Chemical mapping of a 207-nucleotide RNA with 2A3 and DMS.
For 2A3 the reverse transcriptase was SuperScript II with manganese.
RNA sequence: GGGAACGACUCGAGUAGAGUCGAAAACAACUGUUCGCAGUUGAAAAAAUCCUAAGUCUACAGAUGAGGUCAAGUGGAGAACAUUCGGAAACGAAUGUUCGUUGAAACUUGACUCCCCACCAUCGUAGAUAUGGAAAAAAACCACGUUCGCGUGGAACAGGUACGCUAUAUUCGUAUAGCGUACCUGAAAAGAAACAACAACAACAAC
Reactivity to 2A3 in 0.01 (KOAc 150mM, MgCl2 10mM, bicine 150mM(pH8.5), 24C), signal-to-noise 3, nucleotides 027 to 156: c000a010a000c000u010g050u080u120c240g000c110a020g010u040u020g100a160a050a010a000a000a030u020c010c000u030a120a020g020u000c000u000a000c050a140g000a000u010g000a000g000g000u000c000a010a000g010u010g020g010a020g000a010a000c000a000u000u030c010g030g040a040a070a070c000g000a010a000u020g000u000u000c000g010u070u010g000a000a000a000c000u000u000g010a000c000u010c000c000c010c000a020c020c000a000u000c010g000u000a000g010a010u030a050u050g010g030a010a070a010a020a060a010a050c000c040a010c010g000u060u080c290g020c010g160u000g010g030a020a030
Reactivity to DMS in 0.01 (KOAc 150mM, MgCl2 10mM, bicine 150mM(pH8.5), 24C), signal-to-noise 2, nucleotides 027 to 156: c000a050a070c020u010g030u020u000c200g050c030a000g030u010u000g000a000a050a120a160a060a150u000c000c000u010a050a300g020u000c000u000a020c030a130g030a000u000g020a070g010g020u000c000a010a010g020u010g000g000a200g010a030a020c000a020u010u000c020g030g000a220a040a290c000g010a030a020u010g030u010u000c000g000u000u000g010a220a100a020c000u000u000g020a010c030u000c030c020c010c020a120c060c010a010u000c070g020u000a010g030a040u000a300u000g030g000a010a020a070a090a090a130a090c010c010a000c040g000u000u000c220g000c040g010u000g000g000a150a200
The reactions ran in a buffer of 150 mM KOAc, 10 mM MgCl2 and 150 mM bicine (pH 8.5), at 24 C.
For DMS, 2,888 sequencing reads were counted.